RNA sequence: GGGAACGACUCGAGUAGAGUCGAAAAGUCGGAUUCUUCUUGGAAUGUGAGGAAUCCGAACCUUCUCACAUUCCAUUUGCCAUGAGGAGGUAGUAUACUUCAUGGCAAAUAUAGAUGAGGUAUACAGGCAGUGGAGACUAUUCGUAGUCUUCACUGCAAAAGAAACAACAACAACAAC
Reactivity to 2A3 in 0.01 (KOAc 150mM, MgCl2 10mM, bicine 150mM(pH8.5), 24C), signal-to-noise 4, nucleotides 027 to 126: g050u000c000g010g010a000u010u010c000u020u000c000u010u030g040g090a070a020u050g020u010g020a000g000g000a000a000u000c010c010g000a000a000c010c010u050u030c010u010c000a020c000a010u040u000c020c000a000u000u000u000g000c010c000a000u000g000a010g020g010a020g020g020u050a010g050u010a060u020a040c000u000u000c000a000u000g000g000c000a000a000a000u010a000u000a010g150a070u080g050a010g070g060u070a030u030a070c050a020g130
Reactivity to DMS in 0.01 (KOAc 150mM, MgCl2 10mM, bicine 150mM(pH8.5), 24C), signal-to-noise 8, nucleotides 027 to 126: g010u000c000g010g000a050u000u000c010u000u000c040u000u000g010g000a070a030u000g010u000g000a010g000g000a020a010u000c010c060g010a030a030c080c050u000u000c040u000c020a040c040a040u000u000c040c040a120u000u000u000g000c000c000a020u000g000a020g000g000a080g000g010u000a140g010u010a140u020a030c000u000u000c000a010u000g000g000c010a000a000a010u000a100u010a080g000a100u000g000a080g010g010u000a070u000a090c170a110g000

Conditions: 150 mM KOAc, 10 mM MgCl2 and 150 mM bicine (pH 8.5), 24 C. An RNA of 177 nucleotides, treated with 2A3 and DMS and read out base by base. It was measured as part of the RMDB library OK2TRN. For DMS, 23,607 sequencing reads were counted. For 2A3 the reverse transcriptase was SuperScript II with manganese. DMS adducts were read by reverse transcription with MarathonRT.